Notes
The data come from the RNA Mapping Database (RMDB), library TTRDES. An RNA of 177 nucleotides, treated with DMS and 2A3 and read out base by base. The 2A3 profile rests on 3,284 reads. The reactions ran in a buffer of 150 mM KOAc, 10 mM MgCl2 and 150 mM bicine (pH 8.5), at 24 C. Reactivities are rounded to 0.1 and cut off at 0 and 3. The DMS profile rests on 1,380 reads.
RNA sequence: GGGAACGACUCGAGUAGAGUCGAAAAGAUAUGGACCUGUUGUGACAUGGACCAAUAUCGGAAACGAUAUUGCGUCCAACAGCACACUGCAGGUCCUAAGUCAAAGAGAACAGUUCGCUGUUCUCAAGAACAGACCAUGGUUCGCCAUGGUCUGUUCAAAAGAAACAACAACAACAAC
Reactivity to DMS in 0.01 (KOAc 150mM, MgCl2 10mM, bicine 150mM(pH8.5), 24C), signal-to-noise 2, nucleotides 027 to 126: g000a010u000a010u020g020g000a020c010c030u010g030u000u020g010u010g020a180c120a280u010g020g000a000c000c000a000a020u000a000u000c010g000g000a010a020a020c000g010a010u000a000u010u000g000c300g010u000c030c000a030a040c210a150g000c080a030c000a010c130u010g000c000a040g020g020u020c000c040u000a020a060g000u000c000a130a160a180g000a020g010a020a020c000a020g000u000u020c230g020c000u000g020u000u000c000u000c010a050a100
Reactivity to 2A3 in 0.01 (KOAc 150mM, MgCl2 10mM, bicine 150mM(pH8.5), 24C), signal-to-noise 2, nucleotides 027 to 126: g000a000u020a000u060g000g000a010c020c010u020g040u050u000g000u000g020a100c150a300u300g000g000a020c000c010a010a000u000a000u020c000g000g020a000a000a010c000g000a010u010a010u000u070g080c170g000u000c000c000a000a020c000a020g100c020a000c020a000c020u030g000c000a010g020g000u000c000c000u000a000a000g000u000c030a010a090a020g010a020g010a020a000c020a000g020u130u210c300g100c130u010g010u000u000c010u000c000a020a020